RNA sequence: GGGAACGACUCGAGUAGAGUCGAAAAGAUAUGGAAUCGGAUGGAGCAACAGCUAUACGUCGGAAACGACGUAAUAGACAUGCUCCCUCCGAUUCCUAAGUCAAACCAUGUUGUUCGCAACAUGGAACUCUUGGGAUUUCUUCGGAAAUCCCAAGAGAAAAGAAACAACAACAACAAC
Reactivity to DMS in 0.01 (KOAc 150mM, MgCl2 10mM, bicine 150mM(pH8.5), 24C), signal-to-noise 1, nucleotides 027 to 126: g000a010u000a300u000g000g020a020a000u010c000g000g000a000u000g000g000a000g020c040a060a110c300a300g000c000u000a000u000a020c000g010u000c000g000g020a220a100a170c010g000a030c000g010u010a000a030u000a000g020a030c040a210u000g000c010u000c000c000c060u000c000c000g020a010u000u000c010c000u020a010a060g010u020c060a100a120a120c000c000a010u010g000u000u010g000u000u000c240g070c010a110a000c000a000u000g010g000a040a060